[RMDB]
RNA sequence: GGGAACGACUCGAGUAGAGUCGAAAAGGCCCGAUUUCUGUAACUUUACCCAGAAAUAUGGGCGUCUUCCGUGCUGCUUGUUGGGGAACUUAGGUUCUCUCCUCUCCGAGGAGGUGUCGUGCGUGCGGAUCCAUAUCAGGUUCGCCUGAUAUGGAUCAAAAGAAACAACAACAACAAC
Reactivity to DMS in 0.01 (KOAc 150mM, MgCl2 10mM, bicine 150mM(pH8.5), 24C), signal-to-noise 4, nucleotides 027 to 126: g000g010c000c020c000g010a020u000u010u010c010u000g000u020a090a080c260u010u030u030a150c210c190c010a000g000a020a010a000u000a070u020g010g000g010c000g010u010c040u010u010c010c010g010u010g000c040u000g000c080u000u000g000u000u000g010g010g010g000a020a020c020u010u050a100g020g010u000u010c020u000c000u000c020c010u000c020u020c130c090g000a080g000g000a040g000g030u000g020u000c050g010u010g000c100g020u000g010c080g000
Reactivity to 2A3 in 0.01 (KOAc 150mM, MgCl2 10mM, bicine 150mM(pH8.5), 24C), signal-to-noise 2, nucleotides 027 to 126: g060g000c000c000c000g000a000u010u010u000c010u050g080u070a110a140c100u150u210u240a100c070c020c000a000g100a020a010a000u160a260u110g010g000g010c000g060u010c030u040u000c000c000g040u060g030c020u030g050c000u100u080g020u110u090g030g010g030g000a040a010c020u070u090a150g170g000u070u000c050u030c000u020c030c000u020c000u000c040c120g030a090g010g010a000g000g020u030g010u010c040g000u040g010c000g010u040g030c030g050